This 177-nucleotide RNA was probed chemically with DMS and 2A3. For 2A3 the reverse transcriptase was SuperScript II with manganese. For DMS, 15,922 sequencing reads were counted. DMS (dimethyl sulfate) methylates the pairing face of unpaired adenines and cytosines. The 2A3 profile rests on 23,288 reads.
RNA sequence: GGGAACGACUCGAGUAGAGUCGAAAAGAGAAGAUCACCAUGGCCCUGGCCACCAGCAAAGUGGACUACCUGUCGGUGACCACGCCUUACGGCAUUUCGGUUUCUGACUGGAUCGAACAGACCUAUCCACUCGAAUAGAAUUCGUUCUAUUCGAGUGAAAAGAAACAACAACAACAAC
Reactivity to DMS in 0.01 (KOAc 150mM, MgCl2 10mM, bicine 150mM(pH8.5), 24C), signal-to-noise 9, nucleotides 027 to 126: g010a110g010a110a100g000a070u000c030a110c040c030a080u010g010g010c050c060c050u000g000g010c030c020a040c030c050a070g000c140a050a100a100g020u000g010g010a100c080u000a100c050c020u000g010u000c030g010g010u000g000a030c010c010a110c250g010c010c010u010u010a120c260g000g020c020a130u010u010u010c150g010g000u000u000u000c010u000g000a040c040u000g000g010a090u000c070g000a060a080c110a110g000a110c050c020u000a120u010c070
Reactivity to 2A3 in 0.01 (KOAc 150mM, MgCl2 10mM, bicine 150mM(pH8.5), 24C), signal-to-noise 9, nucleotides 027 to 126: g100a010g010a120a020g030a070u060c020a020c080c020a050u080g050g000c010c010c050u010g020g010c020c020a050c010c020a030g090c080a070a080a040g050u050g030g030a080c030u080a090c020c020u020g020u040c020g010g000u020g010a000c000c000a020c040g010c000c000u150u230a080c090g000g000c020a030u120u150u190c110g010g000u010u030u030c010u010g020a020c020u040g040g020a060u080c040g020a050a020c030a050g090a100c010c020u050a080u070c030